[RMDB]
RNA sequence: GGGAACGACUCGAGUAGAGUCGAAAAGAUCUAUCCUUCGGGAUAGAUCAAACUAUAGCCCGCGCAAAACGGGAACGCACCCGAAAACCCGGGCAUAUGCGAAAACUCGCCACUUCGGUGGCGAGAACUCUAUAGUACACUUCGGUGUACUAUAGAGAAAAGAAACAACAACAACAAC
Reactivity to DMS in 0.01 (KOAc 150mM, MgCl2 10mM, bicine 150mM(pH8.5), 24C), signal-to-noise 1, nucleotides 027 to 126: g030a040u000c000u000a000u000c000c000u000u000c280g120g000g060a000u000a000g000a000u000c010a030a080a130c090u010a080u010a130g020c000c000c000g000c250g000c080a110a020a160a170c000g000g000g000a120a140c170g020c140a020c010c000c000g020a010a080a210a140c080c090c000g010g000g000c180a050u030a010u000g020c110g000a090a110a130a130c000u000c000g000c000c000a000c010u000u010c070g010g020u010g000g010c000g010a000g000a000a050
Reactivity to 2A3 in 0.01 (KOAc 150mM, MgCl2 10mM, bicine 150mM(pH8.5), 24C), signal-to-noise 2, nucleotides 027 to 126: g000a000u010c000u000a000u000c010c020u040u070c240g120g010g000a000u000a000g010a000u000c000a000a000a000c010u010a010u090a060g020c000c000c000g030c030g000c030a050a100a020a070c010g000g000g030a030a070c050g040c040a070c040c000c000g060a060a100a060a030c040c030c000g010g010g000c070a140u120a060u150g080c040g040a040a030a060a110c000u020c000g010c030c000a000c020u050u080c250g110g000u040g070g030c000g000a000g000a000a000